Record summary: Source: RMDB libraries RFM100 and RFMREP, as collected in RNAgym. An RNA of 177 nucleotides, treated with 2A3 and DMS and read out base by base. DMS adducts were read by reverse transcription with MarathonRT. The reactions ran in a buffer of 150 mM KOAc, 10 mM MgCl2 and 150 mM bicine (pH 8.5), at 24 C. For 2A3 the reverse transcriptase was SuperScript II with manganese.
RNA sequence: GGGAACGACUCGAGUAGAGUCGAAAAGCUGUGCGUUUUGCAGCUCCAAGCGCUAUCAAGAAACGGCGUGGUAUUCAACUACGUGCGUCAAUGCGCAGUUUGAUAAGCGUCGAUGCUACGGGCAAUCAUAUGUGGUCAACUUCGGUUGACCACAUAUAAAAGAAACAACAACAACAAC
Reactivity to 2A3 in 0.01 (KOAc 150mM, MgCl2 10mM, bicine 150mM(pH8.5), 24C), signal-to-noise 3, nucleotides 027 to 126: g000c000u000g010u060g070c000g040u000u020u100u100g000c000a010g000c000u000c000c000a090a030g030c020g000c030u020a010u090c030a080a000g040a060a070a040c010g010g020c010g000u040g000g040u060a170u070u290c080a140a090c020u020a000c010g040u030g060c010g080u080c060a090a140u270g000c010g000c020a010g030u010u020u060g070a080u070a010a160g000c020g010u040c040g030a050u100g030c000u030a060c070g080g050g000c040a020a070u070c000
Reactivity to DMS in 0.01 (KOAc 150mM, MgCl2 10mM, bicine 150mM(pH8.5), 24C), signal-to-noise 3, nucleotides 027 to 126: g000c030u000g000u000g010c040g010u030u000u000u000g020c020a020g010c000u010c030c000a050a090g010c020g020c000u000a040u000c040a090a100g000a040a050a060c050g000g000c010g010u000g030g020u000a080u090u050c300a070a020c010u020a030c020g010u020g000c010g020u010c220a060a120u040g000c030g000c010a090g000u010u000u000g020a050u030a050a080g000c020g020u010c140g000a080u000g000c000u000a080c180g010g020g030c080a080a060u020c110